[RMDB]
RNA sequence: GGGAACGACUCGAGUAGAGUCGAAAAUGAAAGAGCGUCGCAAUCACACAGACUAAGUCUCACACUGACUGACGCUAAACCGCUCUGUCAGUGUGGGAGAUAUCGGUAUUAAUGUGAGCGGAAAAAAGUUACUAGUGUUCUUCGGAACACUAGUAACAAAAGAAACAACAACAACAAC
Reactivity to DMS in 0.01 (KOAc 150mM, MgCl2 10mM, bicine 150mM(pH8.5), 24C), signal-to-noise 6, nucleotides 027 to 126: u010g010a100a070a100g020a140g020c020g010u000c000g010c030a060a080u000c150a060c080a040c070a080g010a050c090u010a120a130g000u000c000u000c000a010c010a000c010u000g000a010c010u000g000a030c060g020c020u000a020a090a130c100c040g000c040u000c010u000g000u000c000a020g010u000g020u000g000g000g000a000g000a060u010a050u010c050g010g010u000a050u000u000a070a120u000g010u000g000a030g010c030g000g010a000a030a070a070a070a060
Reactivity to 2A3 in 0.01 (KOAc 150mM, MgCl2 10mM, bicine 150mM(pH8.5), 24C), signal-to-noise 4, nucleotides 027 to 126: u170g040a040a050a040g070a010g000c030g040u020c010g010c020a000a050u040c020a020c010a010c020a040g070a040c050u140a280a080g140u000c000u000c010a000c000a000c000u000g000a000c000u010g000a010c020g000c010u020a060a040a030c020c010g010c020u000c000u020g000u000c000a000g000u010g000u000g010g010g000a000g010a000u130a020u030c040g000g020u050a050u130u160a150a090u060g010u000g020a010g010c010g000g000a030a050a010a030a000a030